[RMDB]
RNA sequence: GGGAACGACUCGAGUAGAGUCGAAAAGCAGUAAGGUAAGGCUUUUGGACAAUUGAUCUAAAGCUGCACCCCGGAGAGGACUGCACCAGAGAAAGCAUGUAUCUUCUGUUACCCUUUUGGUGCCCUCGGUUCAUUCAGCAUUCGUGCUGAAUGAACCAAAAGAAACAACAACAACAAC
Reactivity to DMS in 0.01 (KOAc 150mM, MgCl2 10mM, bicine 150mM(pH8.5), 24C), signal-to-noise 2, nucleotides 027 to 126: g020c050a060g000u000a090a070g010g010u020a090a270g000g000c000u010u000u000u010g020g000a030c100a250a110u000u000g010a140u000c040u000a030a060a050g010c020u000g010c270a170c090c030c030c100g010g030a150g010a050g030g000a080c200u000g030c010a000c050c000a040g000a050g010a050a050a040g000c130a040u000g000u010a090u010c120u010u020c050u020g000u000u000a190c210c130c040u000u000u020u010g000g010u000g000c000c050c010u000c020
Reactivity to 2A3 in 0.01 (KOAc 150mM, MgCl2 10mM, bicine 150mM(pH8.5), 24C), signal-to-noise 2, nucleotides 027 to 126: g050c010a050g040u180a140a030g070g040u050a070a010g030g040c000u010u000u080u150g050g000a030c030a160a300u160u250g060a160u080c030u060a040a000a000g000c000u020g020c050a050c000c020c040c030g110g020a170g030a000g010g070a030c120u220g000c020a000c000c040a010g000a000g010a030a100a000g130c060a060u200g050u110a210u070c070u240u040c030u150g060u020u070a110c000c000c040u050u050u000u070g000g010u010g010c010c000c000u000c040
The record gives the reactivity of an RNA of 177 nucleotides to DMS and 2A3. Conditions: 150 mM KOAc, 10 mM MgCl2 and 150 mM bicine (pH 8.5), 24 C. For 2A3 the reverse transcriptase was SuperScript II with manganese. The 2A3 profile rests on 982 reads.